This 207-nucleotide RNA was probed chemically with 2A3 and DMS. For DMS the reverse transcriptase was MarathonRT. The reactions ran in a buffer of 150 mM KOAc, 10 mM MgCl2 and 150 mM bicine (pH 8.5), at 24 C.
[RMDB]
RNA sequence: GGGAACGACUCGAGUAGAGUCGAAAAACGCAGCCAUCACAGUAUCUGUAAUUGCACUCAUUGUUUUCCUGUGGAUUCUAACUAGCACCGCAUGGUUGGUGUCUAUUGAGAUGAGAAUAAAGUCAAUGUUGAUGAGGUCUGCCAGAAAUCAUAGGGACCAACACCUAAGGUUCGCCUUAGGUGUUGGAAAAGAAACAACAACAACAAC
Reactivity to 2A3 in 0.01 (KOAc 150mM, MgCl2 10mM, bicine 150mM(pH8.5), 24C), signal-to-noise 3, nucleotides 027 to 156: a000c070g000c000a010g030c020c000a030u020c010a010c010a010g070u100a060u040c040u060g140u130a130a190u150u140g000c060a030c060u020c020a030u080u040g050u110u210u110u180c020c030u030g030u070g010g030a020u030u000c000u010a010a100c000u000a010g030c080a130c160c110g050c140a100u100g080g010u020u010g010g000u020g080u030c010u010a060u000u140g070a150g010a050u050g020a020g030a050a110u100a130a120a030g040u030c040a040a000u090g050u090u070g090a020u020g010a000g000g130u030c020u030g040c010c000a040g130a070a090a020u140c070a090u150a130g040g000g040a030
Reactivity to DMS in 0.01 (KOAc 150mM, MgCl2 10mM, bicine 150mM(pH8.5), 24C), signal-to-noise 1, nucleotides 027 to 156: a060c090g050c020a110g000c030c050a150u020c040a040c000a190g000u010a040u040c030u010g020u010a060a090u000u000g030c070a140c070u000c020a160u010u000g000u010u010u000u030c030c000u010g040u000g020g010a070u000u010c010u020a060a050c000u020a090g000c010a280c050c050g030c110a150u000g030g010u000u010g020g030u010g000u030c050u000a080u000u020g000a130g000a150u000g010a180g020a100a030u000a030a090a090g010u010c050a040a090u010g010u000u010g020a020u010g030a030g010g010u000c070u020g000c020c060a080g000a040a040a030u010c050a050u010a060g010g000g020a230